Chemical mapping of a 177-nucleotide RNA with DMS. Conditions: 150 mM KOAc, 10 mM MgCl2 and 150 mM bicine (pH 8.5), 24 C. It was measured as part of the RMDB library OK2TRN.
RNA sequence: GGGAACGACUCGAGUAGAGUCGAAAAAAGGGCGCCAUCGCGACGAGCGUGCCUUGCGCGAGCACGUGCGCUUGCAGAUGGGUACGCAAUACGUCGGAGAUUUCGUUCUUCAGCGCGCCGGACGGAAGACGUCGACGGCAUUCGUGCCGUCGACGUCAAAAGAAACAACAACAACAAC
Reactivity to DMS in 0.01 (KOAc 150mM, MgCl2 10mM, bicine 150mM(pH8.5), 24C), signal-to-noise 1, nucleotides 027 to 126: a060a090g040g010g020c000g020c090c120a000u000c060g000c010g000a040c010g010a170g010c000g010u000g020c000c010u000u000g010c300g010c060g020a070g010c050a200c300g000u010g040c180g000c000u000u000g000c000a170g010a120u000g000g020g020u000a000c010g010c000a130a090u000a080c000g000u000c030g030g000a110g000a020u030u000u000c070g000u000u000c000u000u000c060a140g000c120g010c020g010c020c000g040g000a070c070g000g000a170a130